Structure probing data (2A3) for a 207-nucleotide construct. 2A3 adducts were read by reverse transcription with SuperScript II with manganese. Source: RMDB library PDB130, as collected in RNAgym. Conditions: 150 mM KOAc, 10 mM MgCl2 and 150 mM bicine (pH 8.5), 24 C. For 2A3, 474 sequencing reads were counted.
RNA sequence: GGGAACGACUCGAGUAGAGUCGAAAAACGCAUUACGCUAUCCAAUGCCAAGCUAUGGCUAUGCUGGUUGGUACGCUCAAGGGCGAUCGGGUCAGAAAAUCUACCGGUCACAUGCCUCAGACGUAUCGGGAGCUUCCUCGGAAGCGAAGUUGGAAACCCCCUUUACAGUGUUCGCACUGUAAAGGGGAAAAGAAACAACAACAACAAC
Reactivity to 2A3 in 0.01 (KOAc 150mM, MgCl2 10mM, bicine 150mM(pH8.5), 24C), signal-to-noise 1, nucleotides 027 to 156: a000c170g000c130a170u230u190a040c050g000c050u130a130u060c000c000a060a040u180g000c030c000a040a030g040c030u090a100u200g090g000c000u040a000u080g000c020u060g000g230u000u060g000g000u000a020c000g010c050u040c020a040a060g020g000g000c000g000a000u000c010g000g010g020u040c060a020g040a180a300a000a060u010c000u070a020c020c000g010g000u000c000a040c020a150u300g000c000c000u080c000a020g000a020c010g000u030a000u010c040g000g000g000a020g020c000u070u080c000c000u070c170g090g000a020a000g040c000g000a000a050g000u020u040g020g020a020a020a020c000